[RMDB]
RNA sequence: GGGAACGACUCGAGUAGAGUCGAAAAGGUGCGAUGUUCGCAUCGCACCAAAGAAGCUCAAAAUGACGCAAACAACGGCGUGAGCGUGAGCAAACGCGGAAAAAACCACUUGGUUCGCCAAGUGGAACGAUAUCUCACUGUUCGCAGUGAGAUAUCGAAAAGAAACAACAACAACAAC
Reactivity to 2A3 in 0.01 (KOAc 150mM, MgCl2 10mM, bicine 150mM(pH8.5), 24C), signal-to-noise 5, nucleotides 027 to 126: g000g000u000g000c010g000a000u020g020u030u050c110g010c060a000u000c000g000c010a000c000c000a000a000a000g000a020a010g030c010u020c030a030a060a040a180u200g060a050c030g020c040a040a160a150c060a110a100c120g080g000c010g020u020g040a030g000c040g030u060g030a050g020c040a070a050a030c070g000c010g120g060a030a030a010a010a020a080c010c000a010c000u010u010g030g040u060u060c220g010c060c000a000a010g000u010g000g000a000a000
Reactivity to DMS in 0.01 (KOAc 150mM, MgCl2 10mM, bicine 150mM(pH8.5), 24C), signal-to-noise 4, nucleotides 027 to 126: g010g030u000g010c000g030a000u000g010u000u010c230g010c010a010u000c000g010c000a000c000c020a000a060a090g000a130a120g010c010u000c020a060a080a080a120u000g000a060c060g000c040a090a120a120c120a100a100c100g010g000c020g000u000g010a300g020c080g010u010g000a150g030c040a050a140a070c050g010c030g000g000a000a040a070a060a120a080c000c000a000c000u000u000g000g000u010u000c190g010c000c000a000a010g000u000g000g000a010a010